[RMDB]
RNA sequence: GGGAACGACUCGAGUAGAGUCGAAAAUCAUCGUUCUUCGGAACGAUGAAGUAUAACGCGGGCUCCGGACACAGGCGUAGCUGGCCUGGGUUAGUCACAGUAUGGGGCAAACUUUCGAGUUUGCCAAAUCCUGAUGGCGAUUCGUCGCCAUCAGGAUAAAAGAAACAACAACAACAAC
Reactivity to DMS in 0.01 (KOAc 150mM, MgCl2 10mM, bicine 150mM(pH8.5), 24C), signal-to-noise 1, nucleotides 027 to 126: u000c000a000u000c000g010u000u000c000u000u010c270g070g000a010a000c000g080a000u010g000a000a050g000u000a110u000a070a040c050g010c060g000g000g020c020u020c100c090g020g000a030c020a110c050a050g000g020c020g000u000a080g030c130u000g000g010c010c020u010g010g010g000u000u000a050g000u000c070a080c090a040g000u010a050u000g000g060g000g000c000a010a010a000c000u010u000u010c190g010a000g020u000u000u000g020c000c000a040a090
Structure probing data (DMS) for a 177-nucleotide construct.
In probing experiments dimethyl sulfate is read out at A N1 and C N3, which are open when not base-paired.
Source: RMDB library M2PK50, as collected in RNAgym.
For DMS, 967 sequencing reads were counted.
Reactivities are given for positions 27 through 126.